[RMDB]
The data come from the RNA Mapping Database (RMDB), library TTRDES.
This 177-nucleotide RNA was probed chemically with DMS and 2A3.
Values cover nucleotides 27 to 126.
2A3 adducts were read by reverse transcription with SuperScript II with manganese.
The reactions ran in a buffer of 150 mM KOAc, 10 mM MgCl2 and 150 mM bicine (pH 8.5), at 24 C.
RNA sequence: GGGAACGACUCGAGUAGAGUCGAAAAGAUAUGGAGUAUAGGAGCCGAUAAGAUGCCAUCGGAAACGAUGGGCAUCUUUUGACGGCUCUAUACUCCUAAGUCAAACGUCGUCCUUCGGGACGACGAACUCAUCAUAGUAGUUCGCUACUAUGAUGAGAAAAGAAACAACAACAACAAC
Reactivity to DMS in 0.01 (KOAc 150mM, MgCl2 10mM, bicine 150mM(pH8.5), 24C), signal-to-noise 5, nucleotides 027 to 126: g000a020u000a140u010g000g000a020g010u000a010u000a030g030g020a030g050c010c000g040a140u020a020a010g010a010u000g010c000c000a020u010c000g010g000a050a030a060c000g020a010u000g010g020g010c000a000u000c000u000u000u000u010g020a220c150g020g000c010u000c000u000a000u000a010c000u000c000c000u000a000a040g000u000c010a120a140a290c020g020u000c000g010u000c000c000u000u010c260g020g010g010a010c000g010a000c000g010a030a100
Reactivity to 2A3 in 0.01 (KOAc 150mM, MgCl2 10mM, bicine 150mM(pH8.5), 24C), signal-to-noise 5, nucleotides 027 to 126: g000a000u030a010u080g000g010a010g050u030a030u030a130g300g180a040g030c020c040g120a150u190a300a000g010a000u000g010c020c000a000u000c000g010g000a030a000a010c010g010a000u050g050g050g030c000a000u000c020u030u010u030u050g070a030c020g000g000c000u000c000u000a000u000a000c000u000c000c000u000a000a000g000u000c010a020a070a090c000g000u000c010g000u000c000c000u010u080c300g100g000g010a000c000g010a000c000g000a020a000